[RMDB]
RNA sequence: GGGAACGACUCGAGUAGAGUCGAAAAGAUAUGGAUGGUACGUAUGACGCCUGAGUGGACAUGAAUAUCACCUCGGAAACGAGGUGUAUUCAACAGCCACCAGGCGUCAUACGUACCAUCCUAAGUCCUUUCGAUAAAUGUUCGCAUUUAUCGAAAGAAAAGAAACAACAACAACAAC
Reactivity to DMS in 0.01 (KOAc 150mM, MgCl2 10mM, bicine 150mM(pH8.5), 24C), signal-to-noise 2, nucleotides 027 to 126: g000a090u010a300u020g020g000a020u000g000g020u000a000c020g040u020a010u000g010a020c010g010c000c000u000g010a170g030u000g000g000a080c090a280u010g000a020a000u000a010u040c030a000c000c000u010c000g000g000a100a140a210c010g010a010g000g020u000g000u000a010u000u000c000a050a090c300a160g000c020c000a000c010c000a000g000g020c010g000u000c010a010u000a000c000g010u000a000c010c000a000u000c000c010u000a000a080g000u000c040